[RMDB]
RNA sequence: GGGAACGACUCGAGUAGAGUCGAAAAAAAAUCACUGUCCUUAUUGAGUAGCCAUUGUUGCUGAUCAAUAUUAAGCCGGUAAGGUACAAAGCCUUUUUUCAGGCCUUGUUCUACCAACAUUUUUAAGCAAUUAUGGGCAUCGUUAACGGCUUUAGGAGCUAUGGUACCAGUUCGCUGGUACCAUAGCAAAAGAAACAACAACAACAAC
Reactivity to 2A3 in 0.01 (KOAc 150mM, MgCl2 10mM, bicine 150mM(pH8.5), 24C), signal-to-noise 1, nucleotides 027 to 156: a000a000a000a010u140c110a000c020u080g020u020c000c010u080u000a040u010u160g000a030g100u240a090g070c050c030a030u020u020g020u040u040g000c020u000g010a030u030c110a020a030u140a050u160u110a050a070g040c050c010g000g020u060a230a020g030g010u070a000c000a010a000a000g010c010c020u010u190u040u060u140u190c030a000g000g000c000c000u000u000g030u050u020c000u000a020c000c000a050a250c040a090u100u060u000u000u170a040a120g000c000a000a060u110u010a030u060g020g020g000c000a070u040c000g040u050u020a000a040c070g000g000c000u170u110u130a210g040g000a110
This 207-nucleotide RNA was probed chemically with 2A3. 2A3 is a SHAPE reagent: it acylates the 2'-hydroxyl of flexible nucleotides of all four kinds. 2A3 adducts were read by reverse transcription with SuperScript II with manganese. The reactions ran in a buffer of 150 mM KOAc, 10 mM MgCl2 and 150 mM bicine (pH 8.5), at 24 C. Source: RMDB library OK3TST, as collected in RNAgym.